Description:
Structure probing data (DMS) for a 177-nucleotide construct. It was measured as part of the RMDB library OK2TRN. Values cover nucleotides 27 to 126.
[RMDB]
RNA sequence: GGGAACGACUCGAGUAGAGUCGAAAAUUGAAGGUGUGUGCCCAGAUGGUGUGUCUGAUGCAACCCGCACAAGCGCCGAUGACCAAUGGCUCCCAUUAUACCUACUGGGCUUGUACAGAGUCGGCCGGCUAGUCCGGCAGUUCGCUGCCGGACUAGCAAAAGAAACAACAACAACAAC
Reactivity to DMS in 0.01 (KOAc 150mM, MgCl2 10mM, bicine 150mM(pH8.5), 24C), signal-to-noise 1, nucleotides 027 to 126: u000u000g010a090a040g020g030u000g000u010g020u000g010c060c060c030a030g010a200u010g000g020u000g000u000g030u000c060u000g010a150u000g000c060a070a060c040c030c020g000c040a070c080a080a070g010c060g020c010c030g010a090u010g010a130c040c050a040a050u020g040g020c030u000c010c060c020a110u010u000a070u000a000c080c030u000a190c050u020g000g000g000c030u000u000g000u000a020c080a100g000a200g000u000c020g010g020c010c050g000